[RMDB]
RNA sequence: GGGAACGACUCGAGUAGAGUCGAAAAUAGGAGGUGUUCCACCUCGGCUCUGCUCCUCUGCAGGCCGUUAGCAUUCCAAAUAACUAUUUUUAGGCUUUGCAUACUUUUGCGUUGAGGAUGGAAGCAACCCCAGCUGACCUUUCGAGGUCAGCUGGGGAAAAGAAACAACAACAACAAC
Reactivity to 2A3 in 0.01 (KOAc 150mM, MgCl2 10mM, bicine 150mM(pH8.5), 24C), signal-to-noise 1, nucleotides 027 to 126: u300a090g000g000a020g070g110u100g040u210u030c020c000a000c000c000u000c000g000g010c000u000c000u100g090c070u030c010c010u010c040u000g000c000a000g040g030c000c050g000u000u000a050g020c070a190u190u080c050c060a130a080a000u120a000a150c170u090a190u100u020u100u140u180a010g000g000c070u090u100u070g000c010a080u010a160c120u080u130u040u170g130c000g050u000u050g030a010g050g030a030u070g030g030a000a020g060c000a010a000
An RNA of 177 nucleotides, treated with 2A3 and read out base by base. The RNA was probed in 150 mM KOAc, 10 mM MgCl2 and 150 mM bicine (pH 8.5) at 24 C. Source: RMDB library OK1LIB, as collected in RNAgym.